This 177-nucleotide RNA was probed chemically with 2A3. Source: RMDB library OK1LIB, as collected in RNAgym. The RNA was probed in 150 mM KOAc, 10 mM MgCl2 and 150 mM bicine (pH 8.5) at 24 C.
RNA sequence: GGGAACGACUCGAGUAGAGUCGAAAACUAAUUCUGCAACUUCUAUAUUAGACUUAUUAUUUGAGAUUAGUUUUACAUAUCUAGCUUGGUAUGUCCAAAGUUUACCAUCUUUAUUAAAUGUAACUCUGCUAAUCGUAGCAUUCGUGCUACGAUUAGCAAAAGAAACAACAACAACAAC
Reactivity to 2A3 in 0.01 (KOAc 150mM, MgCl2 10mM, bicine 150mM(pH8.5), 24C), signal-to-noise 4, nucleotides 027 to 126: c010u010a030a000u210u090c010u140g110c010a040a000c040u170u040c080u150a140u090a280u300u170a110g070a040c060u140u030a020u080u140a150u020u220u110g050a010g000a010u000u000a010g010u040u000u000u000a010c000a000u020a000u020c000u020a040g200c100u070u060g010g000u000a000u040g020u000c070c030a000a160a110g030u060u130u090a180c010c050a100u110c090u120u140u060a110u080u230a150a130a010u050g020u070a000a010c010u000c040u030